[RMDB]
RNA sequence: GGGAACGACUCGAGUAGAGUCGAAAAACUGCCAUACGUCGCAGAAACACGCCUUACCAGGACUAAACAGCGUGUCUAAAAAACAGUCCUUCAUACCUGAUCUGGAGGGUAGAUCAGGAAUACUAAAAAAAUCGGGUGAAGUUCGCUUCACCCGAAAGCUAUUUUGUCUGUUCGCAGACAAAAUAGCAAAAGAAACAACAACAACAAC
Reactivity to 2A3 in 0.01 (KOAc 150mM, MgCl2 10mM, bicine 150mM(pH8.5), 24C), signal-to-noise 2, nucleotides 027 to 156: a000c020u010g010c000c010a100u100a180c060g010u070c040g090c000a010g020a010a050a030c000a000c010g000c010c000u000u050a020c030c040a010g010g010a000c000u060a100a070a030c020a000g000c010g010u000g000u040c120u040a000a000a010a000a000a010c030a010g000u000c030c010u030u080c060a090u050a160c000c000u000g000a000u000c010u010g050g040a060g060g070g040u100a000g000a000u000c000a000g000g040a000a020u070a080c060u190a050a010a060a000a000a000a120u040c010g010g020g000u000g010a000a010g020u040u140c150g040c100u020u000c000a000c000c000c000g000a000a000a000